[RMDB]
RNA sequence: GGGAACGACUCGAGUAGAGUCGAAAACAGCGUCAAUGACGCUGACGGUACAGGCCAGACUAUUAUUGUCUGGUAUAGUGCAACAGCAGAACAAUUUGCUGAGGGCUAUUGAGGCGCAACAGCAUCUUCUCACACUUAGGUUCGCCUAAGUGUGAGAAAAAGAAACAACAACAACAAC
Reactivity to DMS in 0.01 (KOAc 150mM, MgCl2 10mM, bicine 150mM(pH8.5), 24C), signal-to-noise 1, nucleotides 027 to 126: c060a000g040c000g000u000c000a190a090u000g000a030c020g010c000u000g000a010c170g010g020u020a050c160a180g030g110c000c000a020g020a000c000u000a090u040u000a110u150u000g010u000c000u000g010g020u000a000u000a040g000u100g000c000a070a130c000a010g000c070a000g000a080a170c200a130a100u000u000u060g010c080u000g010a110g040g000g000c020u000a200u000u030g010a000g000g020c000g020c130a100a150c060a040g000c220a050u010c230u000
Reactivity to 2A3 in 0.01 (KOAc 150mM, MgCl2 10mM, bicine 150mM(pH8.5), 24C), signal-to-noise 4, nucleotides 027 to 126: c040a020g040c000g070u050c060a260a230u300g010a040c000g000c030u020g000a020c010g030g010u020a010c020a000g090g060c000c020a000g000a010c030u060a050u300u050a140u270u270g010u010c000u000g010g000u010a000u030a000g020u050g010c050a150a090c040a070g000c000a020g090a060a040c050a220a180u010u020u120g010c000u020g030a090g020g050g000c020u010a040u080u240g040a070g010g080c060g000c020a040a080c000a060g000c000a040u030c070u000